[RMDB]
This 177-nucleotide RNA was probed chemically with 2A3 and DMS. DMS adducts were read by reverse transcription with MarathonRT. The reactions ran in a buffer of 150 mM KOAc, 10 mM MgCl2 and 150 mM bicine (pH 8.5), at 24 C.
RNA sequence: GGGAACGACUCGAGUAGAGUCGAAAAUCGAAACAGCUGGAACUGGGACCGCCAUCAGCGCCCAUGGCGGAAUCGCAGCCGGAUAUGGAUGACGUGGCGCCUGGUAUCGGUGAUCCUGGUGCACUACAAUAGUGACCCCAUUCGUGGGGUCACUAUUAAAAGAAACAACAACAACAAC
Reactivity to 2A3 in 0.01 (KOAc 150mM, MgCl2 10mM, bicine 150mM(pH8.5), 24C), signal-to-noise 2, nucleotides 027 to 126: u150c020g030a040a040a000c090a020g030c090u090g050g000a080a050c010u000g010g010g010a000c000c040g000c000c000a000u040c070a030g030c010g010c040c010c000a020u040g010g000c020g050g090a000a070u180c100g010c030a000g040c000c010g050g050a070u170a070u240g060g060a050u110g030a070c050g050u080g050g020c010g040c020c000u000g000g020u130a080u140c090g050g080u100g000a000u040c000c000u010g020g010u000g010c000a030c060u150a030c100
Reactivity to DMS in 0.01 (KOAc 150mM, MgCl2 10mM, bicine 150mM(pH8.5), 24C), signal-to-noise 1, nucleotides 027 to 126: u010c000g000a130a060a200c160a010g020c120u000g000g000a220a060c000u000g000g000g000a060c000c010g010c020c010a020u020c060a120g000c060g000c100c010c130a040u050g000g040c000g000g000a030a070u020c060g010c120a120g000c000c000g000g000a100u080a130u000g010g000a030u020g020a050c070g000u000g000g030c030g020c010c000u000g030g010u030a100u000c110g000g010u000g000a000u000c000c000u060g060g060u030g010c110a060c050u070a130c220